[RMDB]
RNA sequence: GGGAACGACUCGAGUAGAGUCGAAAAGCACGUCCGGCAAGCCCCGUGCGAACACUUGAGCUCCGGUUUGGCCGCUCUUGUGGAUUAGGACGUUCUAGCUCCGGCUUGGCCGCUAGUUCGUCCGAAACGCGUGACUCGGAUUCGUCCGAGUCACGCGAAAAGAAACAACAACAACAAC
Reactivity to 2A3 in 0.01 (KOAc 150mM, MgCl2 10mM, bicine 150mM(pH8.5), 24C), signal-to-noise 1, nucleotides 027 to 126: g000c000a010c040g000u010c110c000g000g060c040a070a060g010c010c000c000c000g010u000g000c040g000a090a000c020a000c000u000u020g010a010g000c020u070c110c040g300g000u150u170u300g080g000c110c090g000c000u000c000u000u090g000u040g040g000a010u020u140a020g000g000a000c000g000u000u000c010u000a000g000c030u040c070c010g140g000c100u170u300g130g010c030c030g000c030u000a000g000u000u000c000g000u000c000c010g000a000a000a000
Source: RMDB library OK1LIB, as collected in RNAgym.
Structure probing data (2A3) for a 177-nucleotide construct.
For 2A3, 586 sequencing reads were counted.
The reactions ran in a buffer of 150 mM KOAc, 10 mM MgCl2 and 150 mM bicine (pH 8.5), at 24 C.
For 2A3 the reverse transcriptase was SuperScript II with manganese.